[RMDB]
The record gives the reactivity of an RNA of 177 nucleotides to 2A3 and DMS.
Reactivities are given for positions 27 through 126.
RNA sequence: GGGAACGACUCGAGUAGAGUCGAAAAGAUAUGGACAACGAAACCGAAGAACUUAGCUACCCACCUCGGAAACGAGAGGCUAAGGGAGGUUGAGUUGUCCUAAGUCAAACGGGAGUUCGCUCCCGAACUAUUGUGGGUAGUUCGCUACCCACAAUAGAAAAGAAACAACAACAACAAC
Reactivity to 2A3 in 0.01 (KOAc 150mM, MgCl2 10mM, bicine 150mM(pH8.5), 24C), signal-to-noise 4, nucleotides 027 to 126: g000a000u020a010u060g000g000a000c000a000a010c020g030a010a000a000c020c010g180a290a030g000a000a010c010u010u010a000g010c010u090a150c080c060c140a300c220c020u000c010g000g000a000a020a010c010g000a000g020a070g120g000c000u000a000a000g010g000g010a020g000g000u020u010g010a000g000u000u000g000u000c000c000u000a000a000g010u010c020a060a070a090c020g000g030g010a040g020u130u190c240g100c130u010c020c000c000g010a020a010
Reactivity to DMS in 0.01 (KOAc 150mM, MgCl2 10mM, bicine 150mM(pH8.5), 24C), signal-to-noise 5, nucleotides 027 to 126: g010a030u000a110u000g000g000a030c010a010a000c010g000a220a020a010c000c000g000a090a170g000a160a170c000u000u000a010g000c010u000a130c200c160c140a250c220c000u000c000g020g000a020a020a070c000g000a010g000a090g020g000c010u000a000a010g000g000g000a020g030g010u000u020g000a300g000u010u000g010u000c000c000u000a000a060g000u000c020a050a090a130c020g000g000g010a020g000u000u010c290g010c000u000c000c000c000g000a030a090
Values are in units of 0.01, from 0 to 300, in steps of 10. For DMS, 4,313 sequencing reads were counted.